RNA sequence: GGGAACGACUCGAGUAGAGUCGAAAACCACAACCGGAGGAGCCUGCGGUUUAAUUGGACUCAACGCCGGAAAUCUCACCGGUCCCGACAGUAGUAAUGACGGUCAGGUUGACGACUUUACCCGACGGCGGGAUGAACAGUUCGCUGUUCAUCCCGCAAAAGAAACAACAACAACAAC
Reactivity to 2A3 in 0.01 (KOAc 150mM, MgCl2 10mM, bicine 150mM(pH8.5), 24C), signal-to-noise 2, nucleotides 027 to 126: c000c000a070c040a050a030c030c000g010g000a020g090g000a030g110c000c000u000g000c040g030g040u000u000u090a070a050u070u070g130g020a100c030u040c070a000a050c050g000c010c050g020g000a020a080a050u000c020u000c070a110c010c010g000g010u010c040c030c000g110a090c000a030g150u240a000g040u090a220a150u080g000a020c010g000g000u060c040a040g010g030u010u020g000a020c010g010a000c000u060u010u000a000c020c000c000g050a030c040g000